[RMDB]
RNA sequence: GGGAACGACUCGAGUAGAGUCGAAAAGUUUUUCCUAUGUCUGAACAAUGACGCCAUCGUUUUCUGGGUCUUCGAAGCAGUUGCAAAGAAAUGCCCAGAUGGAGGACAGAGGGCCAAACCACCCCAGUGGCGAUCAUAAGUUCGCUUAUGAUCGCCAAAAAGAAACAACAACAACAAC
Reactivity to DMS in 0.01 (KOAc 150mM, MgCl2 10mM, bicine 150mM(pH8.5), 24C), signal-to-noise 2, nucleotides 027 to 126: g000u000u000u000u000u060c000c000u000a080u010g000u020c000u010g000a090a220c050a060a130u000g000a090c150g060c130c170a080u040c030g080u010u010u000u060c000u000g000g000g000u000c300u020u000c000g020a230a230g000c000a220g050u010u030g000c040a030a010a120g000a000a010a040u040g000c010c010c000a040g000a000u020g040g000a260g000g000a040c020a000g020a070g000g000g060c120c120a050a010a080c040c040a200c120c000c030c000a210g010
Reactivity to 2A3 in 0.01 (KOAc 150mM, MgCl2 10mM, bicine 150mM(pH8.5), 24C), signal-to-noise 3, nucleotides 027 to 126: g010u030u010u020u080u000c000c000u030a010u000g010u000c020u040g050a130a030c080a100a180u170g010a050c010g100c100c020a110u140c040g010u000u000u000u110c000u000g000g000g040u040c050u020u030c050g060a110a050g000c060a180g070u300u300g040c000a120a110a000g010a010a040a030u080g000c000c000c000a000g000a010u030g020g010a030g050g010a000c000a010g100a110g020g010g020c010c000a020a000a010c000c010a050c000c000c010c000a010g070
Notes
Chemical mapping of a 177-nucleotide RNA with DMS and 2A3. The DMS profile rests on 1,247 reads. The reactions ran in a buffer of 150 mM KOAc, 10 mM MgCl2 and 150 mM bicine (pH 8.5), at 24 C. For 2A3, 1,345 sequencing reads were counted.